Description: Source: RMDB library OK2TST, as collected in RNAgym. An RNA of 177 nucleotides, treated with 2A3 and DMS and read out base by base. The 2A3 profile rests on 1,137 reads. Values cover nucleotides 27 to 126. The RNA was probed in 150 mM KOAc, 10 mM MgCl2 and 150 mM bicine (pH 8.5) at 24 C. 2A3 adducts were read by reverse transcription with SuperScript II with manganese.
RNA sequence: GGGAACGACUCGAGUAGAGUCGAAAACUUCAUCCAGUCUGGUGUAUAGCUAUUUUGCCGUUGCGCUGGCGCAGGCUGGUUUGCGGGUGAUCAUGCCGGAUGCGCCCGAUCACGGUAGCCGUUUUAAAAAUAGUAGUCGGUUCGCCGACUACUAUUUAAAAGAAACAACAACAACAAC
Reactivity to 2A3 in 0.01 (KOAc 150mM, MgCl2 10mM, bicine 150mM(pH8.5), 24C), signal-to-noise 1, nucleotides 027 to 126: c000u060u040c010a030u070c000c000a000g110u020c020u060g120g000u090g140u140a100u060a190g020c040u040a130u170u080u120u110g020c020c010g060u060u070g020c030g000c060u020g010g010c000g040c030a030g020g110c020u000g000g030u000u030u040g010c000g010g050g030u060g020a000u070c020a030u080g030c000c020g060g030a050u050g010c000g040c040c000c000g000a050u060c030a030c020g000g000u000a000g050c020c000g060u020u070u010u140a040a090
Reactivity to DMS in 0.01 (KOAc 150mM, MgCl2 10mM, bicine 150mM(pH8.5), 24C), signal-to-noise 3, nucleotides 027 to 126: c080u010u010c050a080u000c020c020a060g010u000c040u000g010g040u010g030u000a070u010a090g010c030u000a130u010u010u010u010g010c010c040g010u010u010g030c120g030c070u000g010g010c010g030c010a050g010g010c010u000g000g010u000u000u000g020c050g000g000g010u000g010a040u000c080a070u000g010c010c020g010g010a120u010g010c050g010c010c020c040g000a060u000c040a050c020g000g020u000a050g020c080c080g000u000u000u010u000a010a090